An RNA of 177 nucleotides, treated with 2A3 and DMS and read out base by base. The RNA was probed in 150 mM KOAc, 10 mM MgCl2 and 150 mM bicine (pH 8.5) at 24 C. For DMS, 2,962 sequencing reads were counted. The data come from the RNA Mapping Database (RMDB), library RFMREP. DMS adducts were read by reverse transcription with MarathonRT.

RNA sequence: GGGAACGACUCGAGUAGAGUCGAAAAUGUUUGAAUGUGGAUGGAAUUAAAGCUGGGUUUGUAGUGAGCCAUUAGGAUUAUGGCAAAUGUCUAGUGUACAGAAUUCAGUGUAGGCCGGGAGUUGAGAGCGUAUUAAAUUGUUCGCAAUUUAAUACGCAAAAGAAACAACAACAACAAC
Reactivity to 2A3 in 0.01 (KOAc 150mM, MgCl2 10mM, bicine 150mM(pH8.5), 24C), signal-to-noise 1, nucleotides 027 to 126: u130g010u050u060u080g100a110a060u080g060u000g010g010a060u040g030g050a070a060u100u140a180a140a020g040c010u010g060g020g090u030u070u040g050u000a070g050u030g050a050g000c030c000a010u020u030a050g120g090a020u120u010a010u150g010g000c000a000a080a080u020g010u020c030u000a040g060u030g030u100a000c000a020g100a040a030u060u040c020a010g040u050g070u070a010g000g000c000c060g000g040g010a030g090u030u110g060a080g000a000
Reactivity to DMS in 0.01 (KOAc 150mM, MgCl2 10mM, bicine 150mM(pH8.5), 24C), signal-to-noise 3, nucleotides 027 to 126: u020g010u000u000u000g010a050a070u010g020u000g010g010a090u000g010g020a070a070u010u020a050a100a190g000c010u000g000g000g010u010u000u000g030u000a090g030u000g020a170g020c040c020a030u000u010a080g010g010a150u010u010a040u000g010g020c030a020a070a080u010g010u000c070u020a070g020u010g020u000a060c050a090g000a050a060u000u000c040a040g000u000g010u010a070g000g010c020c040g000g000g000a080g000u010u000g000a090g030a200